Background
Structure probing data (2A3) for a 207-nucleotide construct. For 2A3 the reverse transcriptase was SuperScript II with manganese.

RNA sequence: GGGAACGACUCGAGUAGAGUCGAAAAGCCUCCUCGCUUCCAUAGAAAGGGGACGGGGCAGAUCGCAAGUGCUACAACCGAGCGGUGGUAUCUGUCAAACUAAGCACCCACUGCACAUCAAUUGACUAAACGAUGCCGAUCUUCGGAUCGGCAUCAAGGAAUUUUUUAAGUUCGCUUAAAAAAUUCCAAAAGAAACAACAACAACAAC
Reactivity to 2A3 in 0.01 (KOAc 150mM, MgCl2 10mM, bicine 150mM(pH8.5), 24C), signal-to-noise 2, nucleotides 027 to 156: g010c000c000u010c000c000u050c030g030c070u130u040c020c000a080u070a210g140a060a200a090g020g020g010g020a000c010g020g000g000g000c040a010g030a080u100c060g000c110a120a060g050u030g050c060u030a130c050a150a080c020c110g090a050g010c020g020g010u010g070g000u080a130u080c030u040g090u080c040a060a060a070c080u120a060a040g000c000a030c000c000c020a010c010u030g030c040a030c050a110u140c070a040a220u110u120g050a060c010u110a120a160a000c090g010a000u000g020c020c000g010a000u000c000u050u030c230g050g000a000u000c010g000g030c000a000u000c000a000a000